[RMDB]
Chemical mapping of a 177-nucleotide RNA with DMS and 2A3. The DMS profile rests on 4,959 reads.
RNA sequence: GGGAACGACUCGAGUAGAGUCGAAAAUGUUUAACUCGUUGGUUUGUGUUAAUUUAGGUGGUUUGGCGAGGUAGGUAGUUUAUGCUAAGGCUAAGAGUAAGUUGGGUGUUAAAGAUCUAGAUUAACAGAAUAUUUAUUUUUUCGAAAAUAAAUAUUCAAAAGAAACAACAACAACAAC
Reactivity to DMS in 0.01 (KOAc 150mM, MgCl2 10mM, bicine 150mM(pH8.5), 24C), signal-to-noise 3, nucleotides 027 to 126: u040g020u010u010u020a100a130c120u010c090g040u000u000g000g010u010u020u010g010u000g020u000u010a030a070u020u010u000a030g010g030u010g010g020u000u000u020g000g010c060g010a050g010g020u010a030g010g010u010a020g020u000u010u010a040u040g030c050u010a060a130g000g000c040u010a060a090g010a080g010u020a040a080g010u010u000g000g000g020u000g010u000u020a060a060a040g000a060u020c020u020a060g010a130u000u000a020a050c030a130
Reactivity to 2A3 in 0.01 (KOAc 150mM, MgCl2 10mM, bicine 150mM(pH8.5), 24C), signal-to-noise 2, nucleotides 027 to 126: u130g020u010u130u100a100a070c070u040c070g010u070u040g050g040u050u100u050g070u010g000u010u060a040a050u010u060u100a010g000g030u020g060g000u060u030u090g040g030c000g000a010g000g010u030a010g070g000u000a010g030u010u190u000a190u230g030c030u010a100a000g060g030c010u040a130a010g070a030g030u030a110a050g000u030u030g050g000g060u020g040u010u040a030a000a000g070a010u010c020u010a020g010a110u050u000a000a000c000a040